[RMDB]
RNA sequence: GGGAACGACUCGAGUAGAGUCGAAAAUGUGGAGGCUCCUCACCCUCAUACGCCAUCCUGAGGAGGAGAGUAAGGUCUCUAGCGGCUAUGUAUGUCGAGUAGGCCAUGUUUAUGAGCUCUCUGGCGCCGAGCGCAACUAGUUCGCUAGUUGCGCUCGAAAAGAAACAACAACAACAAC
Reactivity to DMS in 0.01 (KOAc 150mM, MgCl2 10mM, bicine 150mM(pH8.5), 24C), signal-to-noise 1, nucleotides 027 to 126: u000g050u010g000g010a100g010g020c010u000c010c000u000c000a080c050c010c000u010c020a080u000a080c120g020c020c020a020u000c060c030u070g000a050g010g010a070g000g000a020g020a060g020u000a160a200g010g020u000c000u010c040u030a080g010c010g000g000c000u000a110u010g010u010a070u000g020u000c000g010a090g000u010a000g010g000c000c000a080u010g010u000u010u000a070u000g000a110g030c010u000c010u000c010u000g010g010c050g020c220
Reactivity to 2A3 in 0.01 (KOAc 150mM, MgCl2 10mM, bicine 150mM(pH8.5), 24C), signal-to-noise 2, nucleotides 027 to 126: u170g000u080g090g080a080g020g060c020u040c050c000u040c010a090c060c040c010u060c000a010u070a040c060g070c030c000a050u040c020c040u020g030a000g000g010a000g000g040a030g020a000g050u070a180a080g000g030u040c020u000c000u030a070g110c030g020g030c020u080a080u300g240u080a050u190g020u020c040g000a090g040u110a000g130g000c000c090a000u080g140u060u130u020a150u090g070a070g090c000u010c020u040c010u020g040g000c020g020c030
Chemical mapping of a 177-nucleotide RNA with DMS and 2A3. For 2A3, 1,201 sequencing reads were counted. The reactions ran in a buffer of 150 mM KOAc, 10 mM MgCl2 and 150 mM bicine (pH 8.5), at 24 C.